This 177-nucleotide RNA was probed chemically with DMS and 2A3. Conditions: 150 mM KOAc, 10 mM MgCl2 and 150 mM bicine (pH 8.5), 24 C.
RNA sequence: GGGAACGACUCGAGUAGAGUCGAAAAUGAUAUUUUUUGUUUUUGCAGUGUCUAUGUUCCAUCCAAUUAUAACAAAAUCUGGAAUGCAGAGUGGUUCUACUGCAUUUAUGGCUCUUAUGACUUCAGACAUAGCGCAUAUAUUCGUAUAUGCGCUAUGAAAAGAAACAACAACAACAAC
Reactivity to DMS in 0.01 (KOAc 150mM, MgCl2 10mM, bicine 150mM(pH8.5), 24C), signal-to-noise 4, nucleotides 027 to 126: u010g000a090u020a010u000u010u010u010u000u010g010u000u000u000u000u000g000c070a070g000u000g010u010c030u000a060u020g010u020u020c010c010a060u010c010c040a050a040u020u010a070u030a110a100c280a070a050a060a040u020c080u010g000g000a050a020u000g010c000a010g000a100g020u000g010g000u030u020c030u000a040c020u000g000c030a010u000u010u020a060u000g000g010c030u000c050u010u030a060u030g000a050c050u020u000c050a050g000a300
Reactivity to 2A3 in 0.01 (KOAc 150mM, MgCl2 10mM, bicine 150mM(pH8.5), 24C), signal-to-noise 7, nucleotides 027 to 126: u100g060a050u050a230u100u080u030u020u070u080g080u040u050u020u030u090g070c050a060g040u020g020u080c030u070a050u100g050u060u010c010c000a030u010c030c000a090a070u150u110a120u090a240a150c160a110a130a000a080u070c090u050g050g010a040a000u010g010c000a010g010a030g070u170g050g090u200u140c020u080a170c010u000g000c000a000u000u020u040a080u050g010g010c010u000c020u060u090a100u190g050a080c000u040u040c090a000g010a060

For DMS, 12,166 sequencing reads were counted.